RNA sequence: GGGAACGACUCGAGUAGAGUCGAAAAGGGGUUAGCGUUUGCAAAACGCUGUUAUUGCAAUGAUCUGGAUUUAGCGCAAGUAGGUCCGAAAUCCAGAUCAACAUUUCGGACCUCCGCGGUAAUAAAAGUGAAACUAAGGGUUCGCCCUUAGUUUCACAAAAGAAACAACAACAACAAC
Reactivity to DMS in 0.01 (KOAc 150mM, MgCl2 10mM, bicine 150mM(pH8.5), 24C), signal-to-noise 2, nucleotides 027 to 126: g030g010g010g020u000u000a020g010c000g010u000u000u010g010c290a090a070a060a010c000g000c020u010g010u010u000a100u000u000g020c090a100a070u000g000a090u020c010u010g000g020a210u000u010u000a040g010c090g020c050a070a140g000u000a050g030g000u000c040c000g000a010a030a020u010c090c050a040g010a050u020c140a020a040c170a080u000u000u000c020g020g000a020c010c000u000c080c100g010c040g000g000u000a010a060u000a020a060a110a070
Reactivity to 2A3 in 0.01 (KOAc 150mM, MgCl2 10mM, bicine 150mM(pH8.5), 24C), signal-to-noise 1, nucleotides 027 to 126: g080g010g020g000u100u070a010g000c000g050u000u000u050g290c080a000a100a000a000c030g000c060u010g060u050u060a140u160u090g110c100a050a110u090g020a020u120c000u030g020g010a000u050u000u060a140g000c060g010c020a030a180g130u090a010g110g010u040c060c030g010a020a000a000u010c030c000a030g030a010u030c000a000a010c000a010u020u000u000c020g050g000a040c030c000u000c030c020g070c100g070g050u020a020a060u020a050a260a010a030